Structure probing data (2A3 and DMS) for a 177-nucleotide construct. 2A3 adducts were read by reverse transcription with SuperScript II with manganese. The RNA was probed in 150 mM KOAc, 10 mM MgCl2 and 150 mM bicine (pH 8.5) at 24 C. Reactivities are rounded to 0.1 and cut off at 0 and 3. For DMS, 1,286 sequencing reads were counted.
RNA sequence: GGGAACGACUCGAGUAGAGUCGAAAAGGUAUAGGAGGAGGACGUGAUGGAGCGGCAAUAUACAUUGAUGAGAACAUUCUGUUUGGCACAAGCAGUAUGCAUUGUGCAACAUUCGAUUCCCCACCUCGAUUUAUCGCACGUUCGCGUGCGAUAAAUCAAAAGAAACAACAACAACAAC
Reactivity to 2A3 in 0.01 (KOAc 150mM, MgCl2 10mM, bicine 150mM(pH8.5), 24C), signal-to-noise 2, nucleotides 027 to 126: g000g000u100a040u110a070g040g020a030g020g020a010g010g020a030c070g010u020g020a040u100g000g030a030g030c050g010g000c050a080a000u120a000u040a100c040a030u050u150g030a050u070g000a020g000a050a030c030a100u120u020c030u040g100u020u060u080g160g000c040a010c000a010a010g000c000a020g140u150a030u180g030c200a230u030u000g010u000g000c010a000a000c000a040u070u110c020g070a070u040u000c000c080c000c020a080c010c030u010c020
Reactivity to DMS in 0.01 (KOAc 150mM, MgCl2 10mM, bicine 150mM(pH8.5), 24C), signal-to-noise 2, nucleotides 027 to 126: g000g010u030a100u000a090g010g000a090g010g010a090g000g000a060c090g000u000g010a080u010g000g000a130g020c080g020g000c040a080a040u000a050u000a050c120a040u000u000g000a050u010g000a220g010a040a070c100a070u000u000c110u010g010u000u000u010g000g030c000a020c010a010a010g000c040a170g020u010a160u020g000c030a050u000u000g010u000g020c000a020a060c100a060u000u010c080g000a150u000u000c010c010c000c110a060c220c130u030c160